[RMDB]
RNA sequence: GGGAACGACUCGAGUAGAGUCGAAAAGCACGCCAGUCCUUUGCGGGCGCACCGCGCAUUCGCAGUUGGUGCUGCGUCACGAUGACGGUGAAAUUGUAGUGCCAGGUCCGGUAUUGAGUCAUCCGGCGCACUAAAGGGGGUUCGCCCCCUUUAGUGCAAAAGAAACAACAACAACAAC
Reactivity to DMS in 0.01 (KOAc 150mM, MgCl2 10mM, bicine 150mM(pH8.5), 24C), signal-to-noise 3, nucleotides 027 to 126: g010c050a060c070g020c050c040a080g010u000c030c060u010u010u000g020c070g000g010g000c060g020c030a090c070c100g000c040g020c040a070u000u020c040g000c000a060g010u000u010g010g030u010g010c020u000g020c010g020u010c080a090c150g000a060u000g010a130c030g000g000u010g000a060a080a150u010u010g020u000a070g000u010g020c000c060a110g020g000u000c020c010g000g010u000a170u000u000g000a110g010u000c100a080u000c010c030g000g000c120
Reactivity to 2A3 in 0.01 (KOAc 150mM, MgCl2 10mM, bicine 150mM(pH8.5), 24C), signal-to-noise 1, nucleotides 027 to 126: g100c000a010c030g060c000c010a030g050u020c000c000u120u140u260g020c060g080g000g000c000g000c030a090c030c070g080c010g000c000a030u150u000c030g050c020a010g060u130u140g190g110u200g050c030u010g000c000g090u070c010a090c130g150a170u110g110a050c070g040g050u110g060a090a110a090u240u260g010u070a000g010u000g000c020c000a050g020g000u030c000c010g030g010u070a220u010u160g100a040g070u050c030a000u000c030c030g020g040c020
This 177-nucleotide RNA was probed chemically with DMS and 2A3. High 2A3 reactivity points to a flexible backbone, as in loops and unpaired stretches.